Conditions: 150 mM KOAc, 10 mM MgCl2 and 150 mM bicine (pH 8.5), 24 C. Chemical mapping of a 177-nucleotide RNA with 2A3. It was measured as part of the RMDB library OK1LIB.
RNA sequence: GGGAACGACUCGAGUAGAGUCGAAAAGCACAUAUAAAAAAGGCAAUUCCUAAAGGAGCUACAGAGUCUACUAUAAUAGACCUACUAAGUAAAAAUCCCAUCACAGCGAAUGCCGCCGUAGUAAAAUGGGACUGAGUAAUUUCGAUUACUCAGUCCCAAAAGAAACAACAACAACAAC
Reactivity to 2A3 in 0.01 (KOAc 150mM, MgCl2 10mM, bicine 150mM(pH8.5), 24C), signal-to-noise 1, nucleotides 027 to 126: g050c080a040c080a000u300a060u100a040a240a050a000a000a000g140g000c000a000a110u000u000c000c000u000a000a000a180g150g020a080g010c000u010a000c000a040g020a000g190u000c020u070a050c010u030a170u080a300a160u000a000g000a010c010c010u000a000c020u030a080a000g040u160a010a120a040a220a190u030c000c000c000a000u110c030a000c090a010g090c130g000a120a030u160g000c000c000g000c070c010g010u040a040g090u000a110a000a050a180u040